RNA sequence: GGGAACGACUCGAGUAGAGUCGAAAACGUACGGUUACUGAAGCAGACUGGUGAGAUUGUUGCAAUGACUGGAGAUGGUGUCAAUGAUGCACCUGCACUGAAACUAGCUGACAUCGGAAUAGCGAUGCGUUGAAGGCACAUUCGUGUGCCUUCAACGAAAAGAAACAACAACAACAAC
Reactivity to 2A3 in 0.01 (KOAc 150mM, MgCl2 10mM, bicine 150mM(pH8.5), 24C), signal-to-noise 1, nucleotides 027 to 126: c010g030u010a000c000g090g050u030u000a080c010u040g040a040a000g040c000a010g010a110c000u030g000g000u040g010a050g080a170u120u040g040u040u040g000c020a080a050u060g030a040c060u070g070g030a140g020a080u090g010g000u060g070u050c060a110a170u200g030a100u120g000c010a000c030c030u000g000c130a050c020u020g110a050a000a010c020u000a030g000c010u070g030a010c000a020u010c000g000g150a210a110u110a060g110c010g030a020u030g030
Reactivity to DMS in 0.01 (KOAc 150mM, MgCl2 10mM, bicine 150mM(pH8.5), 24C), signal-to-noise 3, nucleotides 027 to 126: c080g010u000a090c160g000g010u000u000a070c070u010g010a110a090g030c050a040g000a140c030u000g020g020u010g010a090g000a110u000u000g010u000u000g010c050a050a050u000g010a060c080u010g000g000a090g000a160u010g010g030u000g000u010c060a050a060u000g020a080u010g040c010a020c020c020u020g000c060a050c050u010g000a080a060a100c100u000a060g020c070u000g000a100c030a020u000c020g030g010a070a080u010a130g030c030g010a070u000g000